[RMDB]
RNA sequence: GGGAACGACUCGAGUAGAGUCGAAAAGAUCGCGAAAAACGCGCCGACGGCAACGACGUCCGCCGCGCUCACGGCUGCAACGCGCCGAGCAGCGCGCCCUCGAGGCCGUAAUACGCGGCGCGCUGCACUCGCGCGAUUUAUUCGUAAAUCGCGCGAGAAAAGAAACAACAACAACAAC
Reactivity to DMS in 0.01 (KOAc 150mM, MgCl2 10mM, bicine 150mM(pH8.5), 24C), signal-to-noise 2, nucleotides 027 to 126: g000a120u010c030g000c000g000a050a080a060a050a110c040g000c000g000c020c010g030a100c070g030g010c080a060a060c080g010a090c100g010u000c170c070g020c050c040g000c000g010c040u000c070a190c030g010g000c000u010g030c070a060a090c190g000c090g020c000c000g000a060g010c150a020g000c000g000c020g010c070c020c070u000c050g000a070g000g010c000c000g050u000a090a100u020a140c230g010c170g000g000c000g010c000g000c040u000g030c080a080
Reactivity to 2A3 in 0.01 (KOAc 150mM, MgCl2 10mM, bicine 150mM(pH8.5), 24C), signal-to-noise 1, nucleotides 027 to 126: g000a030u170c060g010c060g160a180a040a000a000a030c030g010c000g030c010c000g070a040c000g000g050c020a060a050c110g090a010c100g020u000c040c010g040c030c010g000c010g040c000u010c000a010c000g030g000c020u120g010c070a080a110c110g040c020g000c050c000g020a040g080c030a020g000c020g020c020g000c000c000c000u050c070g060a070g060g040c000c030g020u040a000a050u120a050c070g000c020g040g020c000g000c020g000c000u030g030c000a020

Chemical mapping of a 177-nucleotide RNA with DMS and 2A3. Conditions: 150 mM KOAc, 10 mM MgCl2 and 150 mM bicine (pH 8.5), 24 C. DMS adducts were read by reverse transcription with MarathonRT. Values cover nucleotides 27 to 126. For DMS, 1,120 sequencing reads were counted. It was measured as part of the RMDB library OK2TRN.